[RMDB]
RNA sequence: GGGAACGACUCGAGUAGAGUCGAAAAGAGGAGUCAUUCGUGACUCCUCAAAGGGAGCUCAACUCUCCCGCUCAAGUCCGAGAGCCAUCGGACCCAAAAGAAUGCUGUUCCUGUUCGCAGGAACAAACAGAUUCACUUGUUUCGACAAGUGAAUCUGAAAAGAAACAACAACAACAAC
Reactivity to 2A3 in 0.01 (KOAc 150mM, MgCl2 10mM, bicine 150mM(pH8.5), 24C), signal-to-noise 3, nucleotides 027 to 126: g010a000g010g010a000g020u010c020a010u110u120c170g120u060g010a000c010u010c000c000u010c000a000a000a000g000g010g000a000g000c040u040c170a030a080c050u010c020u010c070c000c010g020c010u040c040a080a020g010u010c010c010g020a020g000a040g220c090c030a090u010c000g000g000a010c010c010c000a070a110a010a020g170a110a070u190g040c080u050g050u000u010c000c000u000g020u020u040c200g020c040a000g000g020a000a000c020a010a010a010
Reactivity to DMS in 0.01 (KOAc 150mM, MgCl2 10mM, bicine 150mM(pH8.5), 24C), signal-to-noise 4, nucleotides 027 to 126: g010a000g000g000a020g020u000c000a060u010u020c140g030u010g000a000c000u010c010c000u000c000a010a040a060g000g020g000a020g010c190u000c300a070a110c300u010c000u000c000c000c000g010c080u000c040a080a180g000u000c010c010g010a020g010a090g010c150c140a120u000c000g000g000a060c000c060c060a090a080a080a090g000a130a070u000g010c160u020g010u000u000c000c010u000g000u000u010c180g030c020a010g000g010a000a010c010a020a080a150
Structure probing data (2A3 and DMS) for a 177-nucleotide construct. DMS adducts were read by reverse transcription with MarathonRT. High 2A3 reactivity points to a flexible backbone, as in loops and unpaired stretches. Values cover nucleotides 27 to 126.